This 207-nucleotide RNA was probed chemically with DMS and 2A3. The data come from the RNA Mapping Database (RMDB), library OK3TST. The RNA was probed in 150 mM KOAc, 10 mM MgCl2 and 150 mM bicine (pH 8.5) at 24 C.

[RMDB]
RNA sequence: GGGAACGACUCGAGUAGAGUCGAAAAUUGACAUUCCAUCGAGCUAGCUCUCACUUCCAUUGAAACCUAAUCCAGUGGUAUUUUGUAGACUCACAAUCCAUAUAAAUUUUGGCUGAGCAUAGUGGCAUACACCUGUAGUCCCAGGUACUCGGGAGGCGUUGAUAAGGUAGUUCGCUACCUUAUCAACAAAAGAAACAACAACAACAAC
Reactivity to DMS in 0.01 (KOAc 150mM, MgCl2 10mM, bicine 150mM(pH8.5), 24C), signal-to-noise 2, nucleotides 027 to 156: u000u010g000a100c050a140u010u000c020c030a110u000c070g020a110g010c000u000a080g030c000u010c010u000c010a100c100u020u010c040c000a080u040u000g000a080a090a130c050c060u000a070a140u010c050c010a140g020u000g020g030u000a030u000u000u000u020g040u000a050g010a080c020u000c060a090c060a080a110u000c060c020a090u010a140u000a070a050a190u010u000u000u010g020g020c060u000g020a090g050c030a090u010a060g030u000g010g020c020a090u000a080c050a050c030c020u000g010u000a100g000u000c010c020c050a010g020g060u000a050c060u020c040g020g000g000a040g000g030c090
Reactivity to 2A3 in 0.01 (KOAc 150mM, MgCl2 10mM, bicine 150mM(pH8.5), 24C), signal-to-noise 6, nucleotides 027 to 156: u060u110g030a010c030a050u080u040c040c010a030u050c060g010a000g020c030u060a020g010c010u030c000u020c030a050c060u070u050c030c000a050u040u080g060a090a060a100c030c040u040a070a060u050c040c040a040g020u040g030g020u050a120u010u100u030u050g050u060a020g030a080c020u010c040a040c020a040a060u050c020c020a040u070a030u070a160a190a150u100u120u050u060g030g000c020u030g020a020g010c030a030u050a100g020u030g040g020c010a030u070a100c020a030c020c010u030g020u100a030g060u030c010c020c000a000g040g010u040a050c040u030c030g020g020g000a020g030g030c040

2A3 adducts were read by reverse transcription with SuperScript II with manganese.